[RMDB]
RNA sequence: GGGAACGACUCGAGUAGAGUCGAAAAGAACUGGGUCUCACGUAUGAUUUCAAUGAGCGCACAAGGGAUCGUUCUGAAUUGUGGUUCAUGUCACACCAAGGCAAGCUAAUUGAAGGCAAGUACAUCCGCCAAGGGAUGUGUUCGCACAUCCCUUGGCAAAAGAAACAACAACAACAAC
Reactivity to DMS in 0.01 (KOAc 150mM, MgCl2 10mM, bicine 150mM(pH8.5), 24C), signal-to-noise 1, nucleotides 027 to 126: g010a130a100c040u000g000g000g010u000c000u000c020a120c170g030u010a030u000g000a100u010u020u000c080a040a050u010g010a030g060c040g000c080a040c050a050a180g000g030g040a070u000c070g020u010u010c030u000g010a090a130u010u000g020u000g030g000u000u010c090a070u000g020u000c040a010c100a050c080c070a060a080g000g030c120a050a090g000c050u000a060a130u010u000g000a090a090g020g000c020a020a110g020u000a050c120a080u020c070c130
Reactivity to 2A3 in 0.01 (KOAc 150mM, MgCl2 10mM, bicine 150mM(pH8.5), 24C), signal-to-noise 1, nucleotides 027 to 126: g040a040a010c070u080g020g010g000u000c010u010c020a020c010g030u040a050u200g100a100u000u000u110c050a130a020u090g040a010g020c130g050c080a040c020a090a060g110g040g030a080u040c060g080u090u000c040u090g120a180a130u110u040g030u040g080g010u000u100c020a010u050g030u110c010a050c010a030c030c020a050a010g000g000c030a030a030g000c040u060a020a020u010u020g020a080a070g010g050c040a100a000g050u110a030c010a060u100c010c000